[RMDB]
RNA sequence: GGGAACGACUCGAGUAGAGUCGAAAAUUUUCCUUGAGUUCACCCACUGCUCGAGGACGUCUUCCCUUCCCCCGCGAUUCUUCUUCGACUCGGCCCGGCUCAUUUCGGCAAAGGGCGGCGGUCCUUAACACCGGGAACUUCGGUUCCCGGAAAAGAAACAACAACAACAAC
Reactivity to DMS in 0.01 (KOAc 150mM, MgCl2 10mM, bicine 150mM(pH8.5), 24C), signal-to-noise 2, nucleotides 027 to 129: u110u060u050u020c000c070u020u020g040a170g040u040u040c080a250c040c060c040a200c100u060g060c070u020c010g020a020g010g000a000c190g030u040c210u000u030c000c000c080u000u000c020c000c000c000c020g080c130g000a010u050u070c020u000u000c140u000u000c000g020a030c060u050c140g000g010c100c130c060g000g010c060u010c080a100u030u030u030c090g000g000c060a000a000a000g000g000g030c000g000g160c130g060g040u010c000c030u050u180a150a070c210a000
Reactivity to 2A3 in 0.01 (KOAc 150mM, MgCl2 10mM, bicine 150mM(pH8.5), 24C), signal-to-noise 2, nucleotides 027 to 129: u110u030u000u040c040c020u030u040g040a020g010u090u080c020a050c030c000c000a080c060u110g040c000u000c000g010a020g010g030a170c000g040u040c040u010u020c020c000c000u000u000c050c000c000c000c000g000c060g070a090u040u000c020u000u010c010u030u030c030g070a060c000u000c030g050g000c000c000c000g010g000c010u050c090a140u090u160u070c040g000g090c040a050a060a040g010g000g000c000g040g010c010g080g070u010c000c000u000u120a150a020c060a010